[RMDB]
RNA sequence: GGGAACGACUCGAGUAGAGUCGAAAAGUAGACCUGGAACACAACCGGUUUCUUAUUCUUCAAGGUGAAGUGGAGCAAAUUGCGCUCAUGAAACCUAAAGCAGAGCGUGAGGGUGAGGAGGGUUUACGGUAUCCCAGGAGUUCGCUCCUGGGAUACCAAAAGAAACAACAACAACAAC
Reactivity to 2A3 in 0.01 (KOAc 150mM, MgCl2 10mM, bicine 150mM(pH8.5), 24C), signal-to-noise 2, nucleotides 027 to 126: g130u150a050g000a030c000c010u040g060g000a060a060c030a120c020a300a050c050c080g100g000u110u060u050c000u070u080a220u050u100c030u040u050c050a120a000g130g020u140g100a150a030g020u080g060g000a100g000c000a030a120a190u150u210g020c100g060c000u000c020a040u000g000a000a090a130c040c060u030a000a000a010g050c000a000g010a000g140c020g010u020g090a060g050g050g050u150g050a040g010g050a060g000g010g100u000u000u090a120c230